[RMDB]
RNA sequence: GGGAACGACUCGAGUAGAGUCGAAAAAGCCACCCCUUCAAAGAGUGCGUAACAGCUCACUGGUCGAGUGGACAUGCGCCGACAAUACACGGGGCUAAGCUCUGAACCGAAGCGGCGGGAUGAUUCAUAAAGUAUACCGUUUCGACGGUAUACUUUAAAAAGAAACAACAACAACAAC
Reactivity to DMS in 0.01 (KOAc 150mM, MgCl2 10mM, bicine 150mM(pH8.5), 24C), signal-to-noise 8, nucleotides 027 to 126: a090g010c030c020a120c040c010c010c010u020u030c110a080a100a120g010a060g020u010g010c050g000u010a090a110c160a150g010c010u010c010a060c050u010g010g010u000c070g010a060g020u000g000g020a080c120a080u000g000c030g000c020c010g000a070c090a090a090u040a120c180a110c070g000g000g010g010c040u020a090a120g010c030u000c020u000g020a120a080c090c080g000a100a060g010c110g010g010c040g000g010g010a080u010g010a110u020u010c070a120
Reactivity to 2A3 in 0.01 (KOAc 150mM, MgCl2 10mM, bicine 150mM(pH8.5), 24C), signal-to-noise 6, nucleotides 027 to 126: a000g050c020c000a030c010c000c000c000u050u070c060a080a090a010g080a030g020u090g020c030g060u090a080a080c020a100g030c010u010c020a060c050u050g040g050u080c050g020a040g050u050g020g020a040c040a090u120g010c050g020c010c010g060a070c060a050a090u110a150c080a020c080g000g000g010g000c010u040a060a000g010c010u000c020u050g050a080a040c010c010g020a030a010g020c030g020g010c010g010g010g030a040u060g030a080u050u070c040a030
Overview: Structure probing data (DMS and 2A3) for a 177-nucleotide construct. Reactivities are rounded to 0.1 and cut off at 0 and 3. It was measured as part of the RMDB libraries RFM100 and RFMREP.